The data come from the RNA Mapping Database (RMDB), library M2PK50. This 177-nucleotide RNA was probed chemically with 2A3. 2A3 adducts were read by reverse transcription with SuperScript II with manganese. For 2A3, 606 sequencing reads were counted. Conditions: 150 mM KOAc, 10 mM MgCl2 and 150 mM bicine (pH 8.5), 24 C.

[RMDB]
RNA sequence: GGGAACGACUCGAGUAGAGUCGAAAAUCAGGUCACUUCGGUGACCUGAAAACAAGGAACCAAAAGGAAAACCUAAGCAAGGAAUAUGGAAACCAAAAUAAAAAACCAUAGCCUUCGGGCUAUGGAACACUCUUCUCACGUUCGCGUGAGAAGAGUGAAAAGAAACAACAACAACAAC
Reactivity to 2A3 in 0.01 (KOAc 150mM, MgCl2 10mM, bicine 150mM(pH8.5), 24C), signal-to-noise 1, nucleotides 027 to 126: u000c000a020g060g030u000c010a000c010u060u190c290g110g000u010g020a020c000c000u000g000a000a010a010a010c030a060a030g060g000a020a060c050c020a030a050a000a170g050g080a150a100a050a060c000c010u050a040a060g050c040a070a000g140g020a070a150u280a080u180g050g010a080a040a040c030c030a030a080a150a040u300a090a110a000a000a000a000c000c000a000u000a010g000c000c040u010u130c250g100g000g020c000u000a000u000g000g010a000a000